[RMDB]
RNA sequence: GGGAACGACUCGAGUAGAGUCGAAAAGGAGCUUGCCGCCAGUCCAGGCAGACUCGAAUGCCGCACGGUGCUUGGGAAUAAGAUCUUCCGCACAUCGAUAACUGAUGGUGCCCAUCUCGAAGCCAACCUGACCUUAGUAUUUCGAUACUAAGGUCAGAAAAGAAACAACAACAACAAC
Reactivity to DMS in 0.01 (KOAc 150mM, MgCl2 10mM, bicine 150mM(pH8.5), 24C), signal-to-noise 6, nucleotides 027 to 126: g010g010a050g010c030u010u010g020c030c010g000c060c050a100g020u000c060c100a150g000g020c040a050g000a080c070u010c090g000a080a100u000g010c020c030g000c100a100c070g010g010u000g010c050u000u000g000g010g000a060a070u010a080a110g000a090u010c110u000u000c030c060g010c070a100c040a030u000c020g000a110u020a100a120c100u010g000a060u000g010g010u000g000c010c030c030a070u000c020u000c030g000a080a120g010c050c060a060a100c170
Reactivity to 2A3 in 0.01 (KOAc 150mM, MgCl2 10mM, bicine 150mM(pH8.5), 24C), signal-to-noise 5, nucleotides 027 to 126: g060g010a040g030c050u050u050g000c040c010g010c050c020a020g050u030c030c000a000g030g000c010a010g040a080c060u050c090g070a100a060u070g010c010c010g060c030a040c060g010g030u050g010c030u060u110g090g020g030a050a090u160a120a100g070a150u040c040u030u000c030c010g070c010a020c000a040u040c020g080a090u070a220a090c050u100g010a020u050g050g050u020g030c010c010c010a040u040c020u000c050g080a100a040g010c020c020a020a050c010

This 177-nucleotide RNA was probed chemically with DMS and 2A3. The DMS profile rests on 6,728 reads.